[RMDB]
RNA sequence: GGGAACGACUCGAGUAGAGUCGAAAAGAUAUGGAUUGAGGAGACAUGCUCAGUCGGAAACGACGGAGCAACAGCUCCCAAUCCUAAGUCAAAGGUUGCCGGUAAAGUUCGCUUUACCGGCAACCAAGGUAAUUAAGUGGUUCGCCACUUAAUUACCAAAAGAAACAACAACAACAAC
Reactivity to DMS in 0.01 (KOAc 150mM, MgCl2 10mM, bicine 150mM(pH8.5), 24C), signal-to-noise 3, nucleotides 027 to 126: g000a010u000a290u010g000g000a030u000u000g000a210g030g010a010g020a070c090a170u000g000c000u000c000a040g020u010c000g000g020a090a050a120c010g010a010c010g000g010a000g000c000a010a020c280a130g000c010u010c010c000c000a020a000u000c000c000u020a000a070g010u000c020a100a130a100g000g000u000u000g010c010c000g010g000u000a000a000a010g020u000u010c240g010c010u020u000u020a010c000c000g000g020c000a000a000c000c000a010a010
Reactivity to 2A3 in 0.01 (KOAc 150mM, MgCl2 10mM, bicine 150mM(pH8.5), 24C), signal-to-noise 2, nucleotides 027 to 126: g010a010u060a020u080g010g020a000u000u030g060a260g100g020a020g010a090c090a110u040g000c000u010c010a010g000u000c000g010g000a070a060a010c010g010a000c030g010g010a000g000c000a050a060c060a050g040c000u000c000c010c010a000a010u000c000c000u000a060a030g030u000c030a120a110a020g010g000u020u000g000c010c010g000g000u000a000a010a030g030u060u210c250g030c270u000u000u030a000c000c040g000g000c000a000a000c010c000a000a000
Chemical mapping of a 177-nucleotide RNA with DMS and 2A3. Values cover nucleotides 27 to 126. The reactions ran in a buffer of 150 mM KOAc, 10 mM MgCl2 and 150 mM bicine (pH 8.5), at 24 C. For DMS the reverse transcriptase was MarathonRT.